Structure probing data (2A3 and DMS) for a 177-nucleotide construct. The DMS profile rests on 3,432 reads. The data come from the RNA Mapping Database (RMDB), library TTRDEL. The RNA was probed in 150 mM KOAc, 10 mM MgCl2 and 150 mM bicine (pH 8.5) at 24 C. 2A3 adducts were read by reverse transcription with SuperScript II with manganese.
[RMDB]
RNA sequence: GGGAACGACUCGAGUAGAGUCGAAAAGAUAUGGAAUGAACGCGGAACUACGCUGGUGGGUCGGAAACGACCCACAAGCGCCUAAGCAUUCCUAAGUCAAAGGAAGCAUGCUUCGGCAUGCUUCCAACACCAUGAUAACGUUCGCGUUAUCAUGGUGAAAAGAAACAACAACAACAAC
Reactivity to 2A3 in 0.01 (KOAc 150mM, MgCl2 10mM, bicine 150mM(pH8.5), 24C), signal-to-noise 3, nucleotides 027 to 126: g010a000u050a010u100g010g000a020a000u010g020a260a060c070g010c070g060g050a100a170c200u300a120c300g000c000u030g050g000u000g000g040g000u010c010g010g010a060a040a030c020g010a000c000c010c000a000c010a000a000g020c000g050c000c000u040a050a000g020c000a000u000u020c000c010u000a140a000g030u040c050a120a050a110g000g010a000a000g020c010a000u010g020c000u110u160c250g020g000c000a000u000g000c000u000u000c030c000a010a000
Reactivity to DMS in 0.01 (KOAc 150mM, MgCl2 10mM, bicine 150mM(pH8.5), 24C), signal-to-noise 3, nucleotides 027 to 126: g000a050u010a200u010g000g000a030a010u000g000a040a050c090g020c170g010g010a160a060c170u010a270c040g020c010u000g000g060u000g010g000g010u000c000g010g010a030a010a110c000g000a000c000c000c000a000c010a000a010g020c000g010c020c050u010a190a100g020c010a030u000u000c000c000u000a050a130g000u000c040a090a100a110g000g000a010a010g000c000a000u000g000c000u000u010c210g020g000c000a000u000g000c000u000u000c000c010a050a100